[RMDB]
RNA sequence: GGGAACGACUCGAGUAGAGUCGAAAAAAGGUGACACGACGGAAGGAAUAUUAUCCAGCGCUUAGAAGCAUGUCACCACCGCAACGACUCCUCAGAAACUGGACAGCUUCAAGUGUGGAGUGGCGGCUCAUGGUCCAGCUUUCGAGCUGGACCAUGAAAAAGAAACAACAACAACAAC
Reactivity to DMS in 0.01 (KOAc 150mM, MgCl2 10mM, bicine 150mM(pH8.5), 24C), signal-to-noise 1, nucleotides 027 to 126: a140a050g010g050u000g000a000c010a000c180g020a120c000g050g000a060a100g000g010a140a110u000a150u060u000a030u000c090c020a080g030c070g040c060u010u030a120g010a180a120g050c020a130u020g020u000c030a060c000c000a120c030c020g090c130a120a170c130g010a030c030u000c000c030u000c000a030g000a000a010a070c050u040g000g000a120c170a050g000c030u030u000c050a100a120g020u000g030u010g020g000a020g000u000g030g000c040g020g000c250
Reactivity to 2A3 in 0.01 (KOAc 150mM, MgCl2 10mM, bicine 150mM(pH8.5), 24C), signal-to-noise 2, nucleotides 027 to 126: a000a000g000g000u000g000a000c000a000c030g130a000c080g030g010a080a010g130g060a110a020u100a130u250u240a150u070c010c000a020g060c020g000c060u140u070a110g040a240a000g080c050a030u000g000u010c020a010c000c000a000c030c000g000c040a060a030c090g130a030c000u000c000c000u010c010a040g060a040a070a010c030u050g010g190a080c020a040g100c050u090u040c140a180a000g140u070g010u040g070g000a020g000u010g010g000c000g000g000c000